RNA sequence: GGGAACGACUCGAGUAGAGUCGAAAACUUUAACAAGUAGUUGCAAGGAAGUGUGCAAUGAGUGUUUGGUCUAGUUUGAACACUAGGAAAAGAAGAAUGCCACAGUCUAGGUACCAUUAAAGUCCACCUUGAGAAAGUGCUCUUUAAUUUGAAGUUAGCUCACGGAAAAUUUCGAUUUUCCGUGAGCAAAAGAAACAACAACAACAAC
Reactivity to 2A3 in 0.01 (KOAc 150mM, MgCl2 10mM, bicine 150mM(pH8.5), 24C), signal-to-noise 1, nucleotides 027 to 156: c000u030u040u140a080a030c120a110a020g020u060a050g000u070u040g020c070a040a040g110g110a040a040g100u110g000u020g080c020a030a040u110g010a000g020u030g010u000u040u210g020g000u050c000u060a000g010u020u020u260g100a050a000c020a010c020u000a010g040g100a010a170a000a000g060a000a000g000a010a030u050g020c000c060a040c020a010g030u000c020u100a020g050g010u010a050c020c020a000u000u140a090a040a000g000u020c050c060a000c000c020u090u000g110a090g010a090a020a050g040u050g060c010u000c020u020u070u060a120a090u110u010u100g040a030a020g010u000u020a010

This 207-nucleotide RNA was probed chemically with 2A3. The reactions ran in a buffer of 150 mM KOAc, 10 mM MgCl2 and 150 mM bicine (pH 8.5), at 24 C. 2A3 adducts were read by reverse transcription with SuperScript II with manganese. Reactivities are given for positions 27 through 156.